Annotation: Structure probing data (2A3) for a 207-nucleotide construct. The RNA was probed in 150 mM KOAc, 10 mM MgCl2 and 150 mM bicine (pH 8.5) at 24 C. Source: RMDB library OK3TST, as collected in RNAgym.
RNA sequence: GGGAACGACUCGAGUAGAGUCGAAAAGAAUUGGAAUUUUGGGGGAUGGGACUUGGGUACCCCCUAUUAAUUCAGGGUUGAGGACCACUGAGGCAAAUAAGCUCCUGGAUACCACUUCAAUACCAUGUUUAUUAAAUGUCAUUGUCACUACAUUAAAGAUUUAUAUGCCUUUCGAGGCAUAUAAAUCAAAAGAAACAACAACAACAAC
Reactivity to 2A3 in 0.01 (KOAc 150mM, MgCl2 10mM, bicine 150mM(pH8.5), 24C), signal-to-noise 2, nucleotides 027 to 156: g050a010a050u090u060g010g010a060a050u120u040u060u120g050g030g000g020g010a000u020g000g030g000a030c060u030u070g080g000g030u020a030c000c000c000c000c000u000a040u020u190a060a100u070u100c010a060g030g000g070u090u110g020a020g000g040a030c020c010a050c060u050g050a040g000g030c030a000a130a100u060a140a010g010c030u000c040c020u000g000g010a010u010a070c000c010a030c040u060u050c020a020a010u010a110c000c010a040u070g040u040u160u010a090u040u060a060a030a060u070g010u030c010a030u050u120g000u010c030a020c120u130a050c050a050u300u300a030a000a300
For 2A3, 622 sequencing reads were counted.